[RMDB]
RNA sequence: GGGAACGACUCGAGUAGAGUCGAAAAACAUCUCACUGGGAAGUGAGAUGUGAGUCAGCACGGGAGUGCUGACAGUCGAUUUGUCUUAUAUCCCAAAAGACAAGAGGAGAACGAGAUGUACGGGAGUAGAUCGAGUUCUGCUCGAGGAAUGGGCAAGGUCUUCAGGUCUAUUCGUAGACCUGAAGACAAAAGAAACAACAACAACAAC
Reactivity to 2A3 in 0.01 (KOAc 150mM, MgCl2 10mM, bicine 150mM(pH8.5), 24C), signal-to-noise 1, nucleotides 027 to 156: a000c000a000u000c000u020c000a000c020u040g150g010g000a110a000g020u000g000a010g000a000u000g000u000g010a010g000u000c000a010g020c000a000c030g030g030g050a150g010u010g010c000u000g000a000c000a010g070u050c040g070a070u010u020u040g020u000c010u000u100a040u060a090u120c020c000c000a040a020a040a000g030a020c010a040a020g000a020g040g070a000g000a000a010c020g020a010g000a050u020g050u300a010c040g170g080g040a090g020u030a040g010a030u030c040g000a000g000u000u000c010u040g030c000u010c020g010a040g040g080a120a100u110g000g000g040c040a050a020g080
Chemical mapping of a 207-nucleotide RNA with 2A3. The 2A3 profile rests on 715 reads.